[RMDB]
RNA sequence: GGGAACGACUCGAGUAGAGUCGAAAAGAGCUUGAAUUGCGUUUCGUAGGUUACGGCUACGUUAAAACGUUACAGUUAAAUAUAACUGCUAAAAACGAAAACAAUUCUUUCGCUUUAGCUGCCUAAAAACCAGCUAGCGAAGAUCCUCCCGGCAUCGGAUCACUACAUCGUUCGCGAUGUAGUGAUCAAAAGAAACAACAACAACAAC
Reactivity to 2A3 in 0.01 (KOAc 150mM, MgCl2 10mM, bicine 150mM(pH8.5), 24C), signal-to-noise 2, nucleotides 027 to 156: g030a000g030c050u070u060g030a020a040u080u040g000c040g050u010u040u110c010g010u010a030g030g020u050u040a020c110g050g000c030u010a010c030g050u060u170a040a050a020a020c000g020u000u030a020c020a010g010u020u040a010a180a070u240a110u030a120a040c010u010g030c030u130a180a040a000a000a040c030g010a090a040a040a000c010a020a030u030u000c000u020u080u030c000g020c000u140u150u020a000g000c000u000g010c000c000u050a050a060a010a010a000c000c000a000g000c020u000a000g000c000g000a010a020g010a020u020c000c010u000c010c010c000g030g000c020a080u080c060g080